[RMDB]
RNA sequence: GGGAACGACUCGAGUAGAGUCGAAAAGAUAUGGACUGACAGCAACAGCUACCAUUCGGAAACGAAUGUGUAGACAUGCUGGAUGUCCUAAGUCAAACUGCUAUUGUAGUUCGCUACAAUAGCAGAAGCCCUCUAUAGUGUUCGCACUAUAGAGGGCAAAAGAAACAACAACAACAAC
Reactivity to DMS in 0.01 (KOAc 150mM, MgCl2 10mM, bicine 150mM(pH8.5), 24C), signal-to-noise 3, nucleotides 027 to 126: g000a000u000a210u010g000g010a010c000u000g000a300c000a030g010c000a050a150c290a120g010c000u000a010c000c000a000u000u000c000g020g000a130a090a100c000g000a000a010u000g000u020g000u000a000g020a040c160a110u010g000c000u000g000g000a190u000g020u000c000c000u000a030a080g010u000c020a050a090a200c020u000g010c000u000a000u000u010g010u000a000g010u010u010c240g010c000u000a010c000a020a020u000a000g000c000a010g000a060a090
Reactivity to 2A3 in 0.01 (KOAc 150mM, MgCl2 10mM, bicine 150mM(pH8.5), 24C), signal-to-noise 3, nucleotides 027 to 126: g000a020u050a020u070g000g000a010c000u030g050a020c010a020g030c010a050a150c030a300g050c020u010a000c000c000a000u010u010c010g010g010a030a030a000c010g010a020a000u030g200u070g010u060a010g040a040c020a050u070g010c000u020g010g000a010u060g000u020c000c000u000a030a000g010u000c020a030a050a150c000u010g010c000u000a010u000u000g010u000a010g010u030u090c300g000c150u010a000c000a010a010u010a000g000c010a000g000a000a000
Chemical mapping of a 177-nucleotide RNA with DMS and 2A3. The data come from the RNA Mapping Database (RMDB), library TTRDEL. Reactivities are given for positions 27 through 126. Conditions: 150 mM KOAc, 10 mM MgCl2 and 150 mM bicine (pH 8.5), 24 C. DMS (dimethyl sulfate) methylates the pairing face of unpaired adenines and cytosines. 2A3 adducts were read by reverse transcription with SuperScript II with manganese. The 2A3 profile rests on 6,844 reads.